An RNA of 207 nucleotides, treated with DMS and 2A3 and read out base by base.

RNA sequence: GGGAACGACUCGAGUAGAGUCGAAAAGUAUCAAGGAAGUGGAGCAGUUCAACCAGGUGGCCAAGGCCUACCAGGACCGCUAUCAGGACCUGGGGGCCUACAGUUCUGCCAGGAAGUGCCUGGCCAAACAGAGGCAGAGGAUGCUGCAAGAGAGAAACACUCGAUAAAUCUUCGGAUUUAUCGAGUGAAAAGAAACAACAACAACAAC
Reactivity to DMS in 0.01 (KOAc 150mM, MgCl2 10mM, bicine 150mM(pH8.5), 24C), signal-to-noise 1, nucleotides 027 to 156: g000u000a020u000c030a100a110g000g000a110a060g020u000g000g000a130g020c060a010g030u000u000c060a020a010c010c040a050g040g000u000g030g020c040c010a120a100g000g020c000c010u000a150c010c010a020g000g000a090c010c030g070c160u020a200u000c100a150g030g030a160c000c010u000g000g000g020g000g000c010c010u000a020c040a070g010u000u000c040u000g010c000c030a070g000g010a090a160g000u010g010c000c070u000g020g040c000c080a020a040a050c050a060g020a120g020g020c010a100g000a070g030g030a110u000g010c030u000g000c050a080a100g010a080g000a100g000a220a200a220
Reactivity to 2A3 in 0.01 (KOAc 150mM, MgCl2 10mM, bicine 150mM(pH8.5), 24C), signal-to-noise 2, nucleotides 027 to 156: g040u020a040u240c000a060a030g050g020a080a020g020u050g030g070a060g020c020a030g020u080u100c000a030a070c100c020a030g010g090u050g080g000c060c030a040a030g000g000c000c000u070a300c070c020a000g000g000a090c000c000g040c150u080a100u300c140a070g000g010a030c000c000u000g000g000g010g010g080c000c000u000a000c000a000g000u040u040c030u060g030c000c020a030g090g010a090a110g050u040g100c000c000u010g000g000c000c000a060a080a000c020a000g030a050g070g000c000a000g000a030g060g000a000u070g020c070u010g000c000a010a010g070a020g000a010g000a050a080a000

The data come from the RNA Mapping Database (RMDB), library OK3TST.